[RMDB]
RNA sequence: GGGAACGACUCGAGUAGAGUCGAAAAGAUUUAAACAGAUGGAGAUACACAAAUGUUUGAAUCCCAGUAACAAAAACCCUGGUAUCUCGGGUAUACAGUAGUGCAGAUACUGUAUUUUUAAUGCUCCUUAGGUUUUCCAUCUUCGGAUGGAAAACAAACAAUUGUAAUGAUUCGUCAUUACAAUUGUAAAAGAAACAACAACAACAAC
Reactivity to 2A3 in 0.01 (KOAc 150mM, MgCl2 10mM, bicine 150mM(pH8.5), 24C), signal-to-noise 1, nucleotides 027 to 156: g000a000u000u000u050a000a010a010c000a010g100a070u040g020g000a020g010a020u020a020c020a010c010a040a130a070u040g010u010u020u010g020a020a010u010c020c040c000a040g110u130a150a070c130a130a090a080a110a100c000c000c000u020g020g000u000a020u020c000u000c010g000g010g000u000a000u000a000c000a000g010u020a020g040u040g280c110a020g060a240u010a020c000u000g000u000a020u030u010u000u020u110a130a130u070g030c040u130c050c010u040u080a050g140g000u000u010u000u000c000c000a010u010c010u020u040c180g110g000a000u010g000g000a000a000a000a000c000a000a000
Reactivity to DMS in 0.01 (KOAc 150mM, MgCl2 10mM, bicine 150mM(pH8.5), 24C), signal-to-noise 1, nucleotides 027 to 156: g010a050u020u000u020a000a010a040c000a080g000a290u000g010g010a120g030a090u000a030c030a150c090a060a060a150u000g010u000u010u000g010a060a040u000c000c000c010a300g020u000a180a140c030a050a110a060a120a040c040c020c010u000g060g010u020a030u020c020u000c020g000g010g020u000a080u000a010c000a030g030u000a020g000u010g000c120a180g010a110u000a000c010u000g000u000a000u010u040u020u020u010a070a210u000g020c020u000c010c000u010u000a110g030g000u000u000u000u000c000c010a000u010c000u000u000c280g030g080a000u000g000g000a010a000a010a000c000a050a090